[RMDB]
RNA sequence: GGGAACGACUCGAGUAGAGUCGAAAAAAUUAGAUAGCGGAAUGUUAUGAUUUUAGUAUGCUGCCAAAAGUCAACAUUAAAAUACGACAUUGGCGUAAUGUAUAUAUAAUACUGUUUGUCCCACAAUAAUAGCAUUACCAUCCAUGUUCCGAUGGAAUCCCAAUUCAUCUUUCGAGAUGAAUUGGGAAAAAGAAACAACAACAACAAC
Reactivity to DMS in 0.01 (KOAc 150mM, MgCl2 10mM, bicine 150mM(pH8.5), 24C), signal-to-noise 1, nucleotides 027 to 156: a090a130u020u010a140g050a140u000a070g000c070g040g000a050a010u000g000u000u000a080u000g020a100u000u000u010u000a000g010u000a060u010g000c020u020g090c000c040a080a020a130a160g030u000c000a060a060c070a140u000u010a020a120a080a090u000a170c090g010a070c000a080u020u000g020g040c060g000u000a020a030u030g000u000a040u020a110u000a130u000a070a060u000a020c010u030g030u000u000u000g010u000c000c020c090a040c030a080a140u010a060a010u000a060g000c010a040u000u000a030c040c020a150u000c010c060a060u020g010u000u000c080c040g000a120u020g020g010a110a130
The data come from the RNA Mapping Database (RMDB), library OK3TST. An RNA of 207 nucleotides, treated with DMS and read out base by base. The DMS profile rests on 1,681 reads.